[RMDB]
RNA sequence: GGGAACGACUCGAGUAGAGUCGAAAACAAGGGAAACCAACAAGAAUGUUCCUAUUUAAAGAAGAAUGGAUAUGUUUUUAACAGUGUGUGAUUUUAAAUACGCCAGCUCAGUUACUCAGACACUCAUGUUAAUGAAGUCAAGGUCAGGGUUUGAUCACCGUCAUAAUCGUUUCGACGAUUAUGACGGAAAAGAAACAACAACAACAAC
Reactivity to 2A3 in 0.01 (KOAc 150mM, MgCl2 10mM, bicine 150mM(pH8.5), 24C), signal-to-noise 1, nucleotides 027 to 156: c000a100a160g080g000g000a030a000a030c020c020a030a040c160a060a040g180a130a010u080g000u000u000c010c000u000a160u040u090u010a090a020a020g080a060a000g000a050a020u140g010g050a000u000a060u100g000u080u080u000u000u080a090a050c010a050g000u000g000u000g040u010g190a080u000u070u000u090a000a090a130u050a030c050g000c030c000a000g000c060u000c100a010g000u030u010a090c050u100c090a000g000a140c060a000c000u050c000a100u090g060u180u060a010a010u200g010a060a030g000u010c000a040a030g040g010u030c030a010g120g000g070u110u190u220g050a060u230c000a000
Chemical mapping of a 207-nucleotide RNA with 2A3. 2A3 adducts were read by reverse transcription with SuperScript II with manganese. The RNA was probed in 150 mM KOAc, 10 mM MgCl2 and 150 mM bicine (pH 8.5) at 24 C.